RNA sequence: GGGAACGACUCGAGUAGAGUCGAAAAUACGCGAGGUUCGCCUCGCGUAAAAGAGGAGCGUAAACGUGAGCGUACGUAGUGCUGUACAUCGUUCCUACAGGAAUGCACAUGGUUUCGACCAUGUGAAGUCAGAUACGCCUUUCGAGGCGUAUCUGACAAAAGAAACAACAACAACAAC
Reactivity to DMS in 0.01 (KOAc 150mM, MgCl2 10mM, bicine 150mM(pH8.5), 24C), signal-to-noise 2, nucleotides 027 to 126: u000a020c000g010c000g000a010g010g020u000u010c250g020c000c010u000c010g010c010g000u000a000a000a080a140g010a150g000g020a080g000c010g020u020a010a060a050c100g030u000g010a200g010c250g020u000a070c070g000u010a110g020u010g000c000u000g040u010a050c090a190u000c010g020u000u000c020c000u000a070c190a060g020g000a040a080u010g000c010a010c010a010u000g010g010u000u010u010c250g010a020c010c000a010u000g000u000g000a040a040
Reactivity to 2A3 in 0.01 (KOAc 150mM, MgCl2 10mM, bicine 150mM(pH8.5), 24C), signal-to-noise 2, nucleotides 027 to 126: u060a020c000g000c000g000a000g040g020u000u070c130g110c090c000u000c000g000c010g000u010a010a010a000a000g120a020g060g010a010g010c040g000u090a100a060a070c080g030u080g050a030g110c080g000u080a050c030g120u100a030g040u060g120c070u100g050u090a020c000a040u010c030g030u000u010c020c010u010a090c020a050g070g140a080a060u120g000c000a000c020a000u010g020g010u040u070u060c160g070a000c000c000a000u000g000u010g010a020a010